[RMDB]
RNA sequence: GGGAACGACUCGAGUAGAGUCGAAAACACACCUUCGGGUGUGAAAAAAGAUAUGGAAACUCCUAGGCGCAGAUAUACACGUAACAUCAGUCGGAAACGACUGUGGUGUAUGUAGCCUGUCAGUUUCCUAAGUCAAAAAGCGAACUUCGGUUCGCAAUACGUGGAUAAGAUUCGUCUUAUCCACGUAAAAAGAAACAACAACAACAAC
Reactivity to DMS in 0.01 (KOAc 150mM, MgCl2 10mM, bicine 150mM(pH8.5), 24C), signal-to-noise 2, nucleotides 027 to 156: c000a030c000a020c010c010u010u010c290g050g050g030u000g020u010g000a000a020a060a090a120a140g000a030u000a110u000g000g010a040a010a010c000u000c030c040u010a010g030g000c000g030c190a180g020a040u000a010u000a010c000a030c010g010u000a060a070c130a050u000c020a000g010u000c010g030g010a060a050a090c010g000a020c000u010g000u000g040g040u000g000u010a000u000g010u000a070g020c000c000u000g030u000c000a030g030u010u000u000c000c000u000a000a070g000u000c000a060a090a120a160a150g000c010g020a000a000c010u000u000c300g040g040u000u000c000g050c000a060a060
Reactivity to 2A3 in 0.01 (KOAc 150mM, MgCl2 10mM, bicine 150mM(pH8.5), 24C), signal-to-noise 4, nucleotides 027 to 156: c000a000c000a000c000c010u050u120c300g150g000g000u020g000u050g050a060a010a020a010a010a010g020a020u030a020u050g010g010a010a000a000c000u030c010c040u050a070g020g000c030g080c300a010g010a040u010a000u000a010c000a000c010g040u070a070a020c050a180u280c010a010g000u010c000g000g000a010a020a010c010g000a000c000u000g000u010g010g000u000g000u000a010u000g020u010a030g000c000c000u000g010u010c010a000g000u000u000u010c000c000u000a010a000g010u010c020a040a040a050a110a020g020c010g000a010a010c000u050u060c170g140g000u010u010c000g000c000a000a010

Conditions: 150 mM KOAc, 10 mM MgCl2 and 150 mM bicine (pH 8.5), 24 C. Structure probing data (DMS and 2A3) for a 207-nucleotide construct. DMS adducts were read by reverse transcription with MarathonRT.